[RMDB]
RNA sequence: GGGAACGACUCGAGUAGAGUCGAAAAGUGAGCAAGAUGGAGAAGCAGGGCACGUGCAUUACUAACUCAUGCACACAGAGUGAGAGAGACAUUUCUUGCUGGAGUUAUGACUCUUACCUACUAUAGAGGUAAGUUCACGAUUCGUCGUGAACUUACCAAAAGAAACAACAACAACAAC
Reactivity to DMS in 0.01 (KOAc 150mM, MgCl2 10mM, bicine 150mM(pH8.5), 24C), signal-to-noise 3, nucleotides 027 to 126: g000u000g000a080g000c050a050a070g000a150u030g010g020a040g010a110a080g020c080a020g020g010g000c130a110c130g020u020g000c060a030u010u060a110c140u000a100a080c080u010c020a040u000g000c020a040c070a150c140a070g000a070g010u010g000a090g000a090g000a070g000a060c010a060u000u010u000c040u000u020g000c050u010g000g010a080g030u000u000a010u000g030a110c020u000c000u000u030a100c020c020u000a060c130u000a090u010a070g000a300
Reactivity to 2A3 in 0.01 (KOAc 150mM, MgCl2 10mM, bicine 150mM(pH8.5), 24C), signal-to-noise 5, nucleotides 027 to 126: g100u060g010a010g000c020a030a020g030a050u050g020g050a110g020a140a020g030c050a030g010g010g000c050a020c080g010u010g000c010a030u080u090a060c070u090a070a080c030u040c100a000u040g010c040a020c000a000c030a030g070a000g120u080g010a050g000a000g000a000g030a010c030a070u060u110u010c000u010u100g040c060u030g010g010a040g010u070u070a070u100g060a040c000u000c000u020u010a030c020c000u030a060c010u080a080u050a150g080a020